RNA sequence: GGGAACGACUCGAGUAGAGUCGAAAAGGUCAAGCCCGUCCCGCCGAGCGCGGUGGUGGUCGGGGUGCCCGGGCAGGUCAUCGGCCAAAGCCAGCCCAGUCCCGGCGGCCCGUUUGAUUGGAGGCUGCCGUGCACUCUGUUUCGACAGAGUGCACGGAAAAGAAACAACAACAACAAC
Reactivity to DMS in 0.01 (KOAc 150mM, MgCl2 10mM, bicine 150mM(pH8.5), 24C), signal-to-noise 1, nucleotides 027 to 126: g030g000u000c060a130a130g000c010c000c010g010u000c040c020c020g000c000c020g010a090g020c170g030c050g010g020u000g020g010u000g010g020u010c040g030g010g010g020u000g010c100c020c050g010g000g020c020a090g010g000u000c060a050u010c110g020g000c020c060a080a100a250g020c000c000a050g010c010c010c020a130g020u000c010c040c030g000g000c040g020g010c000c000c020g020u010u000u000g000a170u010u010g010g010a190g010g020c030u010g000

This 177-nucleotide RNA was probed chemically with DMS. Conditions: 150 mM KOAc, 10 mM MgCl2 and 150 mM bicine (pH 8.5), 24 C. The DMS profile rests on 1,315 reads. The data come from the RNA Mapping Database (RMDB), library OK2TST. Values cover nucleotides 27 to 126.